[RMDB]
RNA sequence: GGGAACGACUCGAGUAGAGUCGAAAAGGCAAUUACUUCGGUAAUUGCCAUAUAAACUUGAGAAAAGAAGGGCGCAACUCUAGAAAAUUGCGAAAUAAACAAACAACGAGAGCUUCGGCUCUCGUAACACAGUUAUCUUGUUCGCAAGAUAACUGUGAAAAGAAACAACAACAACAAC
Reactivity to DMS in 0.01 (KOAc 150mM, MgCl2 10mM, bicine 150mM(pH8.5), 24C), signal-to-noise 2, nucleotides 027 to 126: g010g020c000a010a020u000u000a010c000u000u030c190g040g010u000a000a000u000u000g000c000c000a020u000a020u000a090a120a160c070u000u000g000a140g000a100a050a060a090g000a080a060g010g010g010c030g020c010a010a000c080u000c070u000a120g010a100a100a040a110u000u010g010c000g000a070a080a070u010a050a040a080c080a110a100a120c220a050a020c000g010a010g000a020g020c010u000u010c220g020g030c010u000c000u000c010g010u020a040a070
Reactivity to 2A3 in 0.01 (KOAc 150mM, MgCl2 10mM, bicine 150mM(pH8.5), 24C), signal-to-noise 3, nucleotides 027 to 126: g000g010c000a000a010u020u010a020c010u020u060c190g040g000u010a000a010u010u000g000c000c000a000u010a000u000a000a020a000c010u080u120g050a040g080a080a160a050a010g090a070a050g010g030g000c010g010c040a020a010c020u020c080u160a050g100a150a180a060a070u040u030g000c030g050a040a030a090u180a030a090a010c060a060a090a000c050a040a000c020g010a000g010a000g000c000u000u030c110g040g000c000u000c000u000c000g010u000a000a000

This 177-nucleotide RNA was probed chemically with DMS and 2A3. The RNA was probed in 150 mM KOAc, 10 mM MgCl2 and 150 mM bicine (pH 8.5) at 24 C. The DMS profile rests on 1,365 reads. The data come from the RNA Mapping Database (RMDB), library M2PK50. Reactivities are rounded to 0.1 and cut off at 0 and 3.